[RMDB]
An RNA of 177 nucleotides, treated with DMS and 2A3 and read out base by base.
RNA sequence: GGGAACGACUCGAGUAGAGUCGAAAAUCCCCUGGUAUUGUCUUCGAGCUUGGUGUUUUUUUCUAGCCAACUCCAAGUUCUCGAGUUGAUCAUUGUUUGUAUUCUUGAGACAUUAUUUGGGGACGAGUACCUCAGUACAUUUCGAUGUACUGAGGUAAAAAGAAACAACAACAACAAC
Reactivity to DMS in 0.01 (KOAc 150mM, MgCl2 10mM, bicine 150mM(pH8.5), 24C), signal-to-noise 6, nucleotides 027 to 126: u010c000c000c000c000u010g000g000u010a010u000u000g010u000c010u010u010c090g010a020g010c020u010u000g010g010u000g000u000u010u010u040u030u040u020c130u030a100g020c160c140a020a040c000u010c000c010a010a010g010u010u010c010u010c050g010a060g010u000u000g010a080u010c070a090u010u020g010u030u010u010g010u010a080u010u000c020u000u010g010a070g010a030c030a010u000u000a030u000u000u010g000g000g000g000a040c120g010a130g010
Reactivity to 2A3 in 0.01 (KOAc 150mM, MgCl2 10mM, bicine 150mM(pH8.5), 24C), signal-to-noise 9, nucleotides 027 to 126: u010c000c000c000c010u030g010g000u020a010u010u020g010u000c020u050u070c060g010a010g010c010u000u000g010g010u020g070u040u030u010u020u020u070u070c150u090a090g060c040c030a010a000c000u000c010c000a000a000g000u140u030c020u020c030g040a050g040u040u090g070a060u060c050a110u050u180g150u270u190u110g090u100a130u100u050c040u040u090g030a020g000a020c010a010u010u030a020u020u050u070g000g000g000g000a010c030g010a030g070
The reactions ran in a buffer of 150 mM KOAc, 10 mM MgCl2 and 150 mM bicine (pH 8.5), at 24 C.